[RMDB]
RNA sequence: GGGAACGACUCGAGUAGAGUCGAAAAGCAUCCGACAUGGUGCUGGGAUGCGAAUAUCAGCACAUUACUCCUCGAGAAGGCAUGGGAGGAGGAUCAUCCAUGCAAUGGCUUUUGCCUAUCGUACCAUAGAGUCGUCGGUACGUAAGAUGACGACAGAAGCCACUGGUGGAUUCGUCCACCAGUGGCUAAAAGAAACAACAACAACAAC
Reactivity to 2A3 in 0.01 (KOAc 150mM, MgCl2 10mM, bicine 150mM(pH8.5), 24C), signal-to-noise 1, nucleotides 027 to 156: g110c040a000u000c060c080g070a070c050a090u070g020g020u030g000c010u010g010g000g010a010u070g040c060g000a060a020u090a010u150c000a010g010c050a000c010a000u100u130a100c030u000c010c000u000c000g060a060g010a140a030g020g000c010a010u110g030g000g030a070g000g070a040g000g000a020u080c000a000u000c040c010a000u030g000c000a010a100u060g010g000c080u060u100u100u300g000c010c000u050a050u120c050g010u000a000c020c030a030u040a100g060a010g070u090c010g030u070c050g040g000u080a020c050g020u040a070a000g010a040u060g000a000c030g000a000c000a060g070a080